[RMDB]
RNA sequence: GGGAACGACUCGAGUAGAGUCGAAAAUGCUCCAAUCGUCCUGACUCGCCACGCCCACUCUCACGCCCCUCGCGAAUAUGUCAAAAACAAUCAUUUCGAACUGGGCAACCAAAAGCGAGUGCGGUGGAGUGGUACCGCGAUUCGUCGCGGUACCACUAAAAGAAACAACAACAACAAC
Reactivity to 2A3 in 0.01 (KOAc 150mM, MgCl2 10mM, bicine 150mM(pH8.5), 24C), signal-to-noise 1, nucleotides 027 to 126: u090g020c020u000c020c000a120a160u120c000g010u000c000c000u040g000a020c000u000c000g000c050c000a020c060g040c000c020c000a070c000u010c000u000c020a010c040g010c020c020c000c000u030c000g000c020g080a020a000u130a020u110g050u140c050a010a110a060a000a030c070a060a050u230c060a050u190u210u090c060g020a050a060c000u110g000g000g040c060a060a000c000c020a080a000a000a000g060c040g000a020g000u000g010c050g020g000u020g000g090
The data come from the RNA Mapping Database (RMDB), library OK1LIB. The record gives the reactivity of an RNA of 177 nucleotides to 2A3. For 2A3 the reverse transcriptase was SuperScript II with manganese. Reactivities are given for positions 27 through 126. The 2A3 profile rests on 489 reads.